[RMDB]
RNA sequence: GGGAACGACUCGAGUAGAGUCGAAAAAGCAAAAAGGCUCGCCAGCGAUACAAUAUUUGCGGCGACCCGGCGAAUAAUGUCGCCUGUACCGCCCACCAUAAUUGUACUUUUAGCGCAUUAGCGCCGCUCGUGGACGGCGAUUCGUCGCCGUCCACGAAAAAGAAACAACAACAACAAC
Reactivity to 2A3 in 0.01 (KOAc 150mM, MgCl2 10mM, bicine 150mM(pH8.5), 24C), signal-to-noise 1, nucleotides 027 to 126: a000g150c240a170a260a100a000a040g140g000c080u080c000g000c010c000a110g070c000g010a000u000a020c000a300a000u000a080u120u090u300g000c000g000g000c000g000a000c000c030c000g000g000c000g060a060a080u230a080a020u200g130u190c000g000c000c010u060g000u010a030c010c010g070c070c000c000a140c030c000a090u110a080a110u090u100g060u040a030c070u100u070u060u070a030g010c000g000c000a170u010u210a010g000c000g020c060c020g190c090